RNA sequence: GGGAACGACUCGAGUAGAGUCGAAAAGCAAACCACAAUAGAUGAUAGAACAGUAAGAUUAUCCAGGUCAAGGAGAUAAUAAGACACCAGGCAUGUCAUAUAAACGCCUGGAUCAACAUAAAAAAAAUCUAACAUUAUGGUUCGCCAUAAUGUUAGAAAAAGAAACAACAACAACAAC
Reactivity to DMS in 0.01 (KOAc 150mM, MgCl2 10mM, bicine 150mM(pH8.5), 24C), signal-to-noise 3, nucleotides 027 to 126: g010c100a100a060a150c030c020a080c080a110a060u010a060g000a090u000g000a090u000a100g030a040a050c050a030g010u000a050a080g000a070u000u000a040u020c020c030a140g020g010u000c060a070a070g000g030a110g010a060u000a000a020u000a080a080g000a060c060a040c010c010a020g000g000c030a120u010g020u000c100a090u010a100u020a100a110a060c150g000c010c000u010g000g000a200u000c040a030a040c060a060u020a010a000a000a030a050a030a040a080
Reactivity to 2A3 in 0.01 (KOAc 150mM, MgCl2 10mM, bicine 150mM(pH8.5), 24C), signal-to-noise 2, nucleotides 027 to 126: g050c010a110a020a040c020c000a000c040a060a080u130a140g110a100u080g020a010u030a070g080a090a040c090a070g040u090a050a020g030a130u030u050a030u140c040c010a040g000g100u100c020a010a100g060g010a090g000a000u060a050a000u010a040a030g020a000c010a000c060c010a000g030g040c010a030u110g060u050c050a050u100a020u070a290a130a000c030g020c010c000u010g010g010a000u000c000a000a010c010a030u200a050a060a000a000a010a000a000a030